[RMDB]
RNA sequence: GGGAACGACUCGAGUAGAGUCGAAAAUUAAAAGACAUAUUUGAGGUUCAUUUAUUCAAAUUCAAAUAAACUUGUAGAAAAGUACAUUGGCAUAGUUGAAGCAAUUUUACUUGUUCUGUUCUGUCACAUCACGCAACAAGCGAAGGCUAUAAUUAUAAAAUUAGGUACCAUUCGUGGUACCUAAUUUAAAAGAAACAACAACAACAAC
Reactivity to DMS in 0.01 (KOAc 150mM, MgCl2 10mM, bicine 150mM(pH8.5), 24C), signal-to-noise 1, nucleotides 027 to 156: u000u010a110a080a170a140g000a090c040a090u000a020u000u000u000g000a070g000g020u000u000c100a060u000u010u010a080u030u000c050a060a050a110u000u000c020a020a050a110u000a050a010a050c040u000u000g020u000a080g020a080a120a040a140g030u000a060c030a100u000u000g000g040c010a100u030a100g000u000u010g020a140a080g000c060a040a070u000u000u010u000a040c030u000u000g020u010u000c040u000g040u020u000c070u000g030u000c150a050c050a090u000c020a040c080g020c070a060a060c020a010a140g000c010g010a050a080g000g000c010u000a070u000a110a100u000u020a150u000a090
Reactivity to 2A3 in 0.01 (KOAc 150mM, MgCl2 10mM, bicine 150mM(pH8.5), 24C), signal-to-noise 2, nucleotides 027 to 156: u010u010a060a000a000a020g040a020c060a030u300a040u040u010u040g000a000g000g030u050u050c080a090u140u180u270a090u060u100c060a020a050a140u060u040c010a000a080a000u010a000a060a000c060u040u050g080u120a040g050a060a070a020a020g010u010a010c000a080u090u090g050g000c000a000u010a090g010u010u050g040a060a000g030c020a010a070u090u060u070u060a090c000u010u050g000u030u030c010u050g090u070u040c090u030g070u100c030a070c000a070u030c010a000c060g030c010a000a140c020a120a000g060c010g050a010a020g000g020c000u110a020u280a190a050u300u300a150u300a110
This 207-nucleotide RNA was probed chemically with DMS and 2A3. For DMS the reverse transcriptase was MarathonRT. 2A3 adducts were read by reverse transcription with SuperScript II with manganese.